RNA sequence: GGGAACGACUCGAGUAGAGUCGAAAAGGAGAUCAAAUCUCGCAUCACACAAUCGUAUAAAGAGGCAGACACAAUUCUCACAGCAAUUCCCGAUGGAAUUAUCCUCAUCUCAGAAGUAGGCAAUAUCACUGAUAUGACGAUUCGUCGUCAUAUCAGUAAAAGAAACAACAACAACAAC
Reactivity to 2A3 in 0.01 (KOAc 150mM, MgCl2 10mM, bicine 150mM(pH8.5), 24C), signal-to-noise 4, nucleotides 027 to 126: g070g000a030g010a030u050c070a060a110a090u020c030u010c060g000c020a040u040c010a020c000a010c010a070a170u110c070g050u180a070u100a210a140a020g060a050g000g030c010a010g020a020c020a000c020a090a060u100u020c020u000c030a050c020a020g010c020a040a070u020u000c000c010c010g010a050u080g020g040a040a060u070u040a070u160c010c010u030c020a080u000c040u010c060a100g010a190a000g040u110a040g040g000c010a030a050u060a060u230c060
Reactivity to DMS in 0.01 (KOAc 150mM, MgCl2 10mM, bicine 150mM(pH8.5), 24C), signal-to-noise 4, nucleotides 027 to 126: g020g020a030g020a040u000c110a020a100a300u000c040u000c060g010c060a090u010c030a110c070a080c100a080a060u020c120g010u000a090u010a060a120a090g020a050g000g000c030a020g010a090c030a030c050a100a090u000u000c030u000c040a070c110a070g020c110a050a170u000u000c010c010c090g000a110u000g020g000a040a050u000u010a050u000c010c010u000c020a030u010c040u000c080a050g000a050a070g000u010a040g010g000c170a030a040u000a070u000c090